Conditions: 150 mM KOAc, 10 mM MgCl2 and 150 mM bicine (pH 8.5), 24 C. Chemical mapping of a 177-nucleotide RNA with DMS and 2A3. The data come from the RNA Mapping Database (RMDB), library OK2TRN. For 2A3 the reverse transcriptase was SuperScript II with manganese. Reactivities are rounded to 0.1 and cut off at 0 and 3. In probing experiments dimethyl sulfate is read out at A N1 and C N3, which are open when not base-paired.
[RMDB]
RNA sequence: GGGAACGACUCGAGUAGAGUCGAAAAUCACAUGUUGAGGUCGGAGAUAAGAUUAAAUUGGCAUGUGAGCUCGAUUGGUACAGGCUUGUCAGCCCAGGAUCCAAUCUAUUCUCCAGAAACCUACCGCGAUUUUAACUCGUUUCGACGAGUUAGAGUCAAAAGAAACAACAACAACAAC
Reactivity to DMS in 0.01 (KOAc 150mM, MgCl2 10mM, bicine 150mM(pH8.5), 24C), signal-to-noise 9, nucleotides 027 to 126: u000c010a020c020a020u000g010u000u000g010a080g010g010u000c090g010g000a090g010a120u010a090a100g010a120u010u010a040a090a150u010u000g000g000c010a010u000g010u000g010a020g010c170u000c170g000a030u000u000g000g010u000a100c080a170g000g000c000u000u010g010u010c230a080g010c010c000c070a170g000g000a110u010c010c020a010a010u000c010u000a090u000u000c000u000c000c080a140g000a080a100a060c030c020u000a070c070c050g010c210
Reactivity to 2A3 in 0.01 (KOAc 150mM, MgCl2 10mM, bicine 150mM(pH8.5), 24C), signal-to-noise 9, nucleotides 027 to 126: u020c000a000c000a010u030g020u020u080g090a060g020g030u040c030g050g030a110g020a140u110a130a030g020a040u080u190a070a150a110u090u040g010g000c010a010u010g010u010g010a010g000c040u040c070g020a020u010u030g010g000u040a040c020a040g000g020c010u110u180g230u300c120a010g000c000c000c010a040g090g060a030u020c000c000a000a000u000c000u010a050u010u010c030u010c000c000a020g060a060a050a010c000c010u020a030c010c030g050c050